[RMDB]
RNA sequence: GGGAACGACUCGAGUAGAGUCGAAAAGAAUUGGUAUGUAAGCUACCGCUUCCGGUAGCUGCGUCACACUUUAAGAGUGUGCAUACUGAGCCGAAGCUCAGCUUCGGUCCCCCAAGGGAAGUACAAACGGACCCAGUAGUUUCGACUACUGGGUCCGAAAAGAAACAACAACAACAAC
Reactivity to 2A3 in 0.01 (KOAc 150mM, MgCl2 10mM, bicine 150mM(pH8.5), 24C), signal-to-noise 1, nucleotides 027 to 126: g130a010a090u010u000g000g000u000a000u000g030u000a010a010g010c020u000a000c000c010g020c000u010u000c000c000g010g020u000a000g000c000u000g040c000g000u000c020a000c000a000c000u040u190u300a280a060g230a000g300u000g000u000g000c000a000u000a010c000u010g000a010g000c000c000g000a000a000g000c040u060c300a080g010c000u010u010c000g000g000u020c000c000c000c010c050a000a000g090g010g000a000a000g020u060a020c050a050a110a020